[RMDB]
RNA sequence: GGGAACGACUCGAGUAGAGUCGAAAAGCCAUAACGGAAAAUCUCAAUCUCUUGCCGGAACCAGAGCCGCUUCUGUGGGGACCAGAAAUCUCCGGGAUGGUGUUCCAGCACACAGUCACGAUUGCAGUAGAGUUAGUACUUUCGAGUACUAACUCUAAAAAGAAACAACAACAACAAC
Reactivity to 2A3 in 0.01 (KOAc 150mM, MgCl2 10mM, bicine 150mM(pH8.5), 24C), signal-to-noise 9, nucleotides 027 to 126: g010c000c000a040u070a080a040c050g030g050a050a040a040a110u060c050u020c040a110a120u010c020u000c030u070u100g070c040c010g050g010a030a040c040c020a060g020a030g170c030c030g040c060u050u010c020u040g100u100g020g010g010g020a020c020c010a030g070a050a080a040u060c040u000c010c000g000g010g040a040u030g020g030u060g030u080u020c010c010a010g050c020a010c010a010c020a020g060u100c020a000c110g080a100u030u170g020c040a020g070
Reactivity to DMS in 0.01 (KOAc 150mM, MgCl2 10mM, bicine 150mM(pH8.5), 24C), signal-to-noise 5, nucleotides 027 to 126: g000c000c000a050u030a050a040c050g010g020a050a050a080a120u020c040u010c100a120a140u020c040u000c020u020u000g020c110c040g000g000a090a110c060c070a090g000a110g010c030c060g000c060u020u020c010u000g010u020g000g010g020g000a040c060c140a100g020a050a080a140u030c050u000c010c010g010g000g000a050u010g000g010u000g010u000u010c010c020a090g000c090a050c070a040c050a050g000u000c020a040c060g000a060u010u010g010c110a080g000

About this RNA: This 177-nucleotide RNA was probed chemically with 2A3 and DMS. Conditions: 150 mM KOAc, 10 mM MgCl2 and 150 mM bicine (pH 8.5), 24 C.